[RMDB]
An RNA of 177 nucleotides, treated with 2A3 and DMS and read out base by base. For DMS, 8,612 sequencing reads were counted. Reactivities are given for positions 27 through 126. The data come from the RNA Mapping Database (RMDB), library M2PK50.

RNA sequence: GGGAACGACUCGAGUAGAGUCGAAAAGGCCUGACGUUCGCGUCAGGCCAAAGCUGGAGGAGGAUGGAACACUGGGGGGAGCCGAUACCCAGGACAGGGCAGAAACUGUCCCGUUCGCGGGACAGAACAUUAAAUCUUGGUUCGCCAAGAUUUAAUGAAAAGAAACAACAACAACAAC
Reactivity to 2A3 in 0.01 (KOAc 150mM, MgCl2 10mM, bicine 150mM(pH8.5), 24C), signal-to-noise 3, nucleotides 027 to 126: g010g000c000c000u000g010a020c000g030u060u080c300g020c000g120u010c020a000g020g010c010c010a000a000a000g000c020u040g020g010a030g040g010a030g030g020a050u080g030g020a090a020c040a020c120u050g000g000g010g010g020g040a010g000c010c000g020a040u090a080c000c000c010a000g010g020a020c040a040g000g000g040c010a010g100a040a080a030c000u000g010u020c000c000c010g010u010u030c230g020c010g010g000g000a000c000a000g010a000a000
Reactivity to DMS in 0.01 (KOAc 150mM, MgCl2 10mM, bicine 150mM(pH8.5), 24C), signal-to-noise 5, nucleotides 027 to 126: g010g010c000c000u000g010a010c000g020u010u010c220g020c020g010u000c000a010g010g010c000c000a010a010a050g010c090u000g010g010a070g010g020a070g010g000a070u000g000g000a060a080c090a060c080u000g010g020g010g000g010g000a100g000c050c030g010a100u000a060c050c020c020a100g000g000a060c100a070g010g010g010c100a080g000a080a070a150c010u000g000u000c000c000c000g010u000u010c160g010c020g000g000g000a010c000a000g000a060a140
DMS adducts were read by reverse transcription with MarathonRT.